[RMDB]
RNA sequence: GGGAACGACUCGAGUAGAGUCGAAAAGACGCCUGUGUGGCGAAGCGAGCAUGAGAUGGAGCCGCAAGAGAAGAUGAGAUAGAAGCGGCGUGAUAGCUUGCUCGCUAAAAGAUCCAUCUCACAGAGACACGCUAUGAGUCUUCGGACUCAUAGCGUGAAAAGAAACAACAACAACAAC
Reactivity to 2A3 in 0.01 (KOAc 150mM, MgCl2 10mM, bicine 150mM(pH8.5), 24C), signal-to-noise 2, nucleotides 027 to 126: g240a050c020g010c000c000u160g070u070g140u280g130g000c000g000a000a000g000c000g000a000g000c030a050u090g050a000g020a060u040g120g000a000g010c000c000g020c050a000a080g150a000g020a190a090g040a110u220g090a100g100a080u240a120g060a300a000g030c000g000g000c000g000u100g030a050u130a000g000c020u000u000g000c000u040c000g000c000u020a000a000a000a050g020a090u000c000c010a120u020c010u050c000a120c020a130g070a040g020a050
Reactivity to DMS in 0.01 (KOAc 150mM, MgCl2 10mM, bicine 150mM(pH8.5), 24C), signal-to-noise 1, nucleotides 027 to 126: g000a090c100g010c000c000u030g000u080g060u030g000g000c000g050a140a030g090c000g000a040g080c010a140u070g000a000g000a020u000g000g000a200g000c000c000g000c000a020a170g000a170g000a140a010g000a260u060g030a080g000a260u000a060g010a140a090g000c000g040g010c000g000u080g000a000u010a130g000c000u000u030g010c000u000c000g000c040u000a000a040a100a020g000a100u060c020c000a050u000c040u000c070a140c080a170g000a120g000a180